[RMDB]
Structure probing data (2A3 and DMS) for a 177-nucleotide construct. For 2A3 the reverse transcriptase was SuperScript II with manganese. As a SHAPE reagent, 2A3 marks flexible, mostly unpaired nucleotides at the ribose 2'-OH. Reactivities are given for positions 27 through 126. High DMS reactivity at an A or C suggests that its Watson-Crick edge is free. It was measured as part of the RMDB library OK2TST. Conditions: 150 mM KOAc, 10 mM MgCl2 and 150 mM bicine (pH 8.5), 24 C.

RNA sequence: GGGAACGACUCGAGUAGAGUCGAAAAUUACAAGUGUUUAUUUAGCUUCUAAAGCUCUUUAGCACAGCUCAGGGGGCUCUCACAGGAAGGAAGACUCUGAAUCCAUUGGUGUCAGUGGAAUAUGAGGCAUUAGAUGCUAGUUCGCUAGCAUCUAAUGAAAAGAAACAACAACAACAAC
Reactivity to 2A3 in 0.01 (KOAc 150mM, MgCl2 10mM, bicine 150mM(pH8.5), 24C), signal-to-noise 5, nucleotides 027 to 126: u200u120a070c050a130a130g050u010g020u090u140u030a070u030u070u050a000g010c000u040u020c060u280a160a110a020g000c010u010c010u070u050u050a020g000c010a030c020a120g010c030u040c070a010g040g020g020g020g000c010u000c000u020c020a070c020a030g080g030a050a020g040g020a020a040g020a020c000u000c020u030g010a030a060u000c010c010a020u010u050g080g030u240g200u300c010a010g010u010g000g040a020a000u110a040u110g020a010g030g000
Reactivity to DMS in 0.01 (KOAc 150mM, MgCl2 10mM, bicine 150mM(pH8.5), 24C), signal-to-noise 7, nucleotides 027 to 126: u000u020a110c150a110a120g010u000g010u000u010u010a030u010u000u000a030g010c010u000u000c160u010a080a110a060g010c020u000c030u000u000u000a040g000c040a040c080a110g010c060u000c090a150g010g000g010g000g010c040u000c020u000c050a090c120a080g000g010a070a060g000g010a080a060g010a100c020u000c010u000g000a120a140u000c010c010a020u000u000g010g020u000g010u010c010a020g010u000g010g000a030a050u000a090u010g010a030g000g000